[RMDB]
Chemical mapping of a 207-nucleotide RNA with 2A3 and DMS. Values cover nucleotides 27 to 156. The RNA was probed in 150 mM KOAc, 10 mM MgCl2 and 150 mM bicine (pH 8.5) at 24 C. For 2A3, 2,833 sequencing reads were counted. It was measured as part of the RMDB library M2RFPK.
RNA sequence: GGGAACGACUCGAGUAGAGUCGAAAAGGAGGACGAAGCAUAUUUCUGUUUCUGGAGGAUUAUUUAUAAUCUCCCGGAAAGUCUUGCAGGUGGCUGGGAUAUGUUCAGUCUGGUAGAAUUAAGCACGAAAACGUGUCCUUGUUCGCAAGGACACGAACAAGACUCAUUACUUCGGUAAUGAGUCUUGAAAAGAAACAACAACAACAAC
Reactivity to 2A3 in 0.01 (KOAc 150mM, MgCl2 10mM, bicine 150mM(pH8.5), 24C), signal-to-noise 4, nucleotides 027 to 156: g040g010a040g000g020a010c020g040a020a020g010c020a020u040a070u090u090u070c040u100g120u030u030u010c010u010g010g010a040g010g010a010u020u010a010u040u250u030a140u050a070a030u000c050u030c020c010c000g000g030a040a020a020g040u050c050u130u120g070c030a020g040g080u060g040g010c040u050g040g000g000a010u030a020u070g090u120u060c080a020g010u000c020u020g030g030u090a040g100a080a050u110u120a080a030g030c060a030c110g070a030a020a030a050c010g000u000g000u000c010c000u000u010g020u050u060c140g000c130a000a000g000g010a000c000a000c000g000a000a000
Reactivity to DMS in 0.01 (KOAc 150mM, MgCl2 10mM, bicine 150mM(pH8.5), 24C), signal-to-noise 2, nucleotides 027 to 156: g010g000a160g010g020a070c020g010a160a200g010c020a070u000a040u020u010u000c010u010g000u000u000u000c010u000g020g020a030g000g000a000u000u000a050u000u000u000a050u000a090a020u000c000u000c000c000c000g030g000a030a020a100g020u010c040u000u000g030c090a130g030g000u010g020g010c040u000g030g020g000a070u000a010u000g000u010u010c060a220g010u000c030u000g010g020u010a060g010a080a070u000u000a040a110g020c050a080c050g000a090a030a110a150c040g040u000g000u010c000c010u000u000g010u000u000c250g010c030a030a030g020g010a030c010a000c000g010a050a080